Chemical mapping of a 207-nucleotide RNA with 2A3 and DMS. The reactions ran in a buffer of 150 mM KOAc, 10 mM MgCl2 and 150 mM bicine (pH 8.5), at 24 C. It was measured as part of the RMDB library RNAMAK. For 2A3, 3,423 sequencing reads were counted. 2A3 adducts were read by reverse transcription with SuperScript II with manganese.
RNA sequence: GGGAACGACUCGAGUAGAGUCGAAAACGUUCGUUGUUCGCAACGAACGAAAAAAGCGUACUACCCAUACAACUUUUGACGCUCCGUAUCCCAAAUAGGAUACGAAGAGCGAUAAGUUGUGGGUAUCGCAAAAAACCCUUAGAUUCGUCUAAGGGAAGUUAACUAUCAGUUUCGACUGAUAGUUAACAAAAGAAACAACAACAACAAC
Reactivity to 2A3 in 0.01 (KOAc 150mM, MgCl2 10mM, bicine 150mM(pH8.5), 24C), signal-to-noise 3, nucleotides 027 to 156: c020g010u000u000c010g000u000u020g010u040u100c270g000c110a000a000c000g000a000a000c000g000a050a010a010a000a000a000g070c070g030u100a090c060u010a000c040c010c000a030u140a130c020a010a000c000u050u070u080u100g200a090c020g000c010u000c000c010g000u000a000u000c030c010c010a130a300a060u300a140g000g000a000u010a000c000g040a170a080g000a000g000c000g010a010u020a070a000g000u010u000g000u050g000g010g000u020a040u140c040g000c000a030a040a010a040a050a090c000c000c000u000u000a020g000a020u060u020c290g020u000c250u000a000a000g000g000g010a000a000
Reactivity to DMS in 0.01 (KOAc 150mM, MgCl2 10mM, bicine 150mM(pH8.5), 24C), signal-to-noise 1, nucleotides 027 to 156: c010g040u000u010c030g000u000u000g000u000u000c300g000c020a060a000c000g010a030a010c000g000a000a030a040a100a080a120g000c040g040u000a060c110u000a040c010c000c000a190u000a170c040a030a020c000u000u000u000u000g000a090c010g000c000u000c010c000g000u000a010u000c010c000c000a040a170a240u000a030g010g000a030u000a000c000g000a000a060g030a000g000c000g000a020u010a000a020g030u000u000g050u000g010g010g050u000a040u010c000g040c010a010a020a070a060a100a100c000c000c010u000u000a000g020a080u000u000c300g040u000c000u000a000a010g040g050g020a000a010